RNA sequence: GGGAACGACUCGAGUAGAGUCGAAAAGUACUAUGCCCGCCAUUAUUGAUGCAUCCUCCACCUCCCACUCCUUAAUAGUUGCUUUGAAGUUUCCUUUCGGUGGGUUCUGCAGCGUCUUUAUCAGAAAAUGAAAAAGUUGAUUCGUCAACUUUUUCAUAAAAGAAACAACAACAACAAC
Reactivity to DMS in 0.01 (KOAc 150mM, MgCl2 10mM, bicine 150mM(pH8.5), 24C), signal-to-noise 4, nucleotides 027 to 126: g010u000a080c080u000a080u010g000c010c010c020g010c050c060a090u000u010a090u010u010g010a080u000g020c040a080u000c030c020u000c010c020a070c040c040u000c010c000c020a110c070u000c050c030u000u000a070a090u000a080g010u010u000g000c050u010u000u000g010a060a150g010u000u000u000c010c010u000u000u010c070g010g020u000g010g000g000u000u000c040u010g000c050a070g010c060g000u000c040u000u000u010a060u010c050a110g000a070a060a060